[RMDB]
RNA sequence: GGGAACGACUCGAGUAGAGUCGAAAAGCCUGGGAGGAAGGGAGUGAUUAUCUCCAGGUGCCUCUGGGAGGAAUGAAUUACUCUGUAUAACCAGAUAGUCCCAACAGGCAGGGGGCCUCUUGUAGGAGCACAGCAGUUAAUUCGUUAACUGCUGUGCAAAAGAAACAACAACAACAAC
Reactivity to 2A3 in 0.01 (KOAc 150mM, MgCl2 10mM, bicine 150mM(pH8.5), 24C), signal-to-noise 1, nucleotides 027 to 126: g010c000c000u080g100g040g030a010g000g010a020a030g070g000g000a000g000u080g050a120u010u230a060u070c000u000c000c030a060g040g120u110g070c040c000u100c020u010g000g040g060a070g000g130a150a160u200g080a100a020u080u050a040c020u030c000u010g060u030a290u030a140a020c060c000a010g010a040u020a050g060u000c000c000c000a030a050c000a000g000g000c020a020g020g010g000g000g010c000c010u030c010u060u080g040u120a020g020g110a120
Reactivity to DMS in 0.01 (KOAc 150mM, MgCl2 10mM, bicine 150mM(pH8.5), 24C), signal-to-noise 2, nucleotides 027 to 126: g000c120c020u000g050g020g010a110g000g020a180a120g020g010g000a010g020u000g010a110u030u000a110u000c010u000c000c020a060g000g000u000g000c150c100u000c050u010g040g000g000a080g000g000a120a100u000g010a080a060u010u010a040c130u000c010u000g020u020a110u030a110a160c120c010a030g000a080u000a150g010u010c000c000c010a040a130c160a040g010g030c030a150g000g010g000g010g000c030c020u000c010u000u020g020u010a040g000g010a210